Background:
An RNA of 177 nucleotides, treated with 2A3 and DMS and read out base by base. DMS (dimethyl sulfate) methylates the pairing face of unpaired adenines and cytosines. For DMS, 817 sequencing reads were counted. The 2A3 profile rests on 970 reads. Conditions: 150 mM KOAc, 10 mM MgCl2 and 150 mM bicine (pH 8.5), 24 C. High 2A3 reactivity points to a flexible backbone, as in loops and unpaired stretches. The data come from the RNA Mapping Database (RMDB), library OK2TST.
RNA sequence: GGGAACGACUCGAGUAGAGUCGAAAAUCAGCUGUUUGUAUUCAACAAUGUAAGAUAUAAAGAGGGAUUUAAAGAGCUAGCAACGAAAUCCGUAACAUGCACUUCUUGAAAGCAAUCAGAAUGUCCCCUUCUACUAGACCUUCGGGUCUAGUAGAAGAAAAGAAACAACAACAACAAC
Reactivity to 2A3 in 0.01 (KOAc 150mM, MgCl2 10mM, bicine 150mM(pH8.5), 24C), signal-to-noise 1, nucleotides 027 to 126: u030c020a030g050c010u010g040u040u040u020g010u050a110u040u060c020a030a000c020a040a020u070g070u120a050a030g040a150u140a040u070a140a180a060g100a090g000g030g060a030u000u040u140a170a140a020g030a010g060c080u140a010g010c020a000a080c040g130a020a060a020u000c000c010g000u040a090a040c040a020u060g020c010a020c030u030u010c010u000u040g000a060a020a020g020c020a030a010u060c000a020g070a110a020u030g030u010c010c000c000
Reactivity to DMS in 0.01 (KOAc 150mM, MgCl2 10mM, bicine 150mM(pH8.5), 24C), signal-to-noise 2, nucleotides 027 to 126: u000c140a080g020c030u000g010u000u000u000g060u000a170u000u030c030a040a040c080a050a060u020g040u010a040a030g010a090u000a040u010a100a050a080g010a090g020g010g010a040u000u000u000a040a040a100g010a100g010c070u020a030g020c070a070a070c110g010a060a040a010u020c010c070g000u010a040a120c120a070u000g010c010a050c120u000u010c050u000u010g000a050a030a300g010c010a000a040u000c010a050g000a040a090u010g000u000c000c000c000